RNA sequence: GGGAACGACUCGAGUAGAGUCGAAAAGCAUCCGACAUGGUGCUGGGAUGCGAAUAUCAGCACGUUACUCCUCGAGAAGGCAUGGGAGGAGGAUCAUCCAUGCAAUGGCUUUUGCCUAUCGUACCAUAGAGUCGUCGGUACGUAAGAUGACGACCGAAUGACCACGAGCAUUCGUGCUCGUGGUCAUAAAAGAAACAACAACAACAAC
Reactivity to 2A3 in 0.01 (KOAc 150mM, MgCl2 10mM, bicine 150mM(pH8.5), 24C), signal-to-noise 1, nucleotides 027 to 156: g000c000a050u010c050c050g080a110c130a150u060g100g000u040g080c030u000g050g000g000a020u080g070c080g110a020a010u070a030u010c030a010g000c000a000c000g030u010u040a010c000u010c030c000u040c000g060a020g000a020a100g000g020c000a000u000g040g060g050a060g020g000a040g000g000a010u070c000a040u000c010c000a000u020g000c000a000a100u040g120g000c060u300u180u070u210g000c060c000u010a030u020c000g000u030a000c000c010a000u020a010g040a000g010u000c000g000u000c040g000g000u060a150c060g040u110a060a010g070a050u120g000a000c010g000a000c010c010g000a020